Overview
An RNA of 177 nucleotides, treated with DMS and 2A3 and read out base by base. 2A3 adducts were read by reverse transcription with SuperScript II with manganese. Conditions: 150 mM KOAc, 10 mM MgCl2 and 150 mM bicine (pH 8.5), 24 C.

RNA sequence: GGGAACGACUCGAGUAGAGUCGAAAACACAUGGUCUGCUCUUGUGACUAUUAGUCUCGAAAUAUGGCAUAAAACAAGGGGGAACGGAUCUUGCGACAUUGGUGGUUCCUCUAUGAUCCUCCAAUUACAGAAGCCCUAGUUUCGACUAGGGCUUCUGAAAAGAAACAACAACAACAAC
Reactivity to DMS in 0.01 (KOAc 150mM, MgCl2 10mM, bicine 150mM(pH8.5), 24C), signal-to-noise 1, nucleotides 027 to 126: c130a150c060a170u000g000g000u010c000u000g040c010u000c050u000u020g000u000g000a050c040u000a030u000u000a110g020u010c000u050c070g020a070a000a080u050a060u020g000g030c020a070u000a010a130a160a090c020a010a080g090g000g000g000g010a150a260c060g000g040a000u000c000u000u000g000c130g000a170c140a040u000u000g000g010u000g040g000u000u100c000c170u050c060u000a150u010g000a080u010c010c020u080c010c000a050a070u000u020a300
Reactivity to 2A3 in 0.01 (KOAc 150mM, MgCl2 10mM, bicine 150mM(pH8.5), 24C), signal-to-noise 2, nucleotides 027 to 126: c050a000c000a030u100g000g010u020c020u050g010c030u020c000u000u080g010u000g040a080c010u010a040u190u130a030g020u010c070u050c130g080a060a060a070u270a190u150g000g000c020a040u110a080a090a010a000c030a030a070g000g060g000g000g000a000a070c000g010g000a040u020c000u050u020g030c010g120a050c120a100u000u140g020g000u030g000g070u020u040c130c030u090c120u200a290u170g100a050u060c000c010u000c000c000a010a000u060u030a090